An RNA of 177 nucleotides, treated with DMS and 2A3 and read out base by base. Source: RMDB library OK2TRN, as collected in RNAgym. The reactions ran in a buffer of 150 mM KOAc, 10 mM MgCl2 and 150 mM bicine (pH 8.5), at 24 C. The 2A3 profile rests on 22,417 reads. The DMS profile rests on 15,383 reads. DMS adducts were read by reverse transcription with MarathonRT.
RNA sequence: GGGAACGACUCGAGUAGAGUCGAAAAGCCGAUAGCUCUACCACUGAGCUACUGUGGAUUAAUAUUAUGCCUGGCAACGUUCUACUCUAGCGGAACGUAAGUUCGACUACCAUCGACGCUAAGGAGCCAACUAACUAACGUUCGCGUUAGUUAGUUGAAAAGAAACAACAACAACAAC
Reactivity to DMS in 0.01 (KOAc 150mM, MgCl2 10mM, bicine 150mM(pH8.5), 24C), signal-to-noise 9, nucleotides 027 to 126: g010c010c010g020a110u010a020g010c000u000c010u000a110c250c200a160c280u000g010a030g010c010u000a000c070u000g010u010g010g010a120u000u010a090a110u010a110u010u010a080u010g010c010c010u000g000g010c040a160a090c060g000u000u000c000u000a050c030u000c100u010a070g020c040g010g010a020a010c010g000u000a080a080g010u000u000c020g010a060c030u000a110c090c050a100u000c020g010a030c050g010c010u000a040a050g010g010a100g020c170
Reactivity to 2A3 in 0.01 (KOAc 150mM, MgCl2 10mM, bicine 150mM(pH8.5), 24C), signal-to-noise 9, nucleotides 027 to 126: g050c010c010g030a110u030a020g000c000u020c010u070a210c040c190a110c280u100g000a010g050c000u020a030c040u090g100u150g060g040a080u140u150a140a150u180a140u300u140a100u230g060c010c010u010g010g000c010a020a020c020g000u020u000c010u030a070c040u060c080u160a040g070c070g030g030a010a010c010g020u040a060a040g030u040u020c010g010a030c020u090a060c010c010a020u020c010g020a010c010g000c020u050a100a050g040g000a010g040c030